[RMDB]
RNA sequence: GGGAACGACUCGAGUAGAGUCGAAAAGAUAUGGAACUCUCUAAAGCUGAUGACCUAUGUACAGAGGAUAGCUCGGAAACGAGCUAUCCUCCGAGGCAUAGCAAGGCUGAUGGGAGUUCCUAAGUCAGUCUCAUAAUAUCUUCGGAUAUUAUGAGACAAAAGAAACAACAACAACAAC
Reactivity to 2A3 in 0.01 (KOAc 150mM, MgCl2 10mM, bicine 150mM(pH8.5), 24C), signal-to-noise 3, nucleotides 027 to 126: g030a020u070a090u130g000g010a000a010c000u020c010u030c010u180a300a060a000g000c000u030g040a300u150g020a200c000c020u000a010u010g010u010a000c000a000g010a010g020g000a000u000a000g010c010u010c010g040g030a100a120a070c000g030a000g000c000u000a000u010c000c000u000c000c000g010a000g000g000c000a000u010a000g010c000a010a260g000g010c010u010g000a080u250g000g000g020a000g000u010u000c000c000u000a010a000g030u000c060a010
Reactivity to DMS in 0.01 (KOAc 150mM, MgCl2 10mM, bicine 150mM(pH8.5), 24C), signal-to-noise 8, nucleotides 027 to 126: g010a060u010a300u010g010g010a010a010c010u000c010u010c010u000a260a270a040g010c000u000g000a110u010g000a110c300c000u010a000u000g000u000a000c000a030g000a020g000g000a010u000a000g000c000u000c010g010g000a080a060a190c010g000a010g010c000u000a000u000c000c000u000c000c000g020a300g000g000c000a010u000a000g000c030a040a080g010g020c000u000g000a200u000g000g000g000a020g000u000u000c000c000u000a010a060g000u000c070a150
Conditions: 150 mM KOAc, 10 mM MgCl2 and 150 mM bicine (pH 8.5), 24 C. Structure probing data (2A3 and DMS) for a 177-nucleotide construct. It was measured as part of the RMDB library TTRINS. 2A3 adducts were read by reverse transcription with SuperScript II with manganese. The DMS profile rests on 11,362 reads.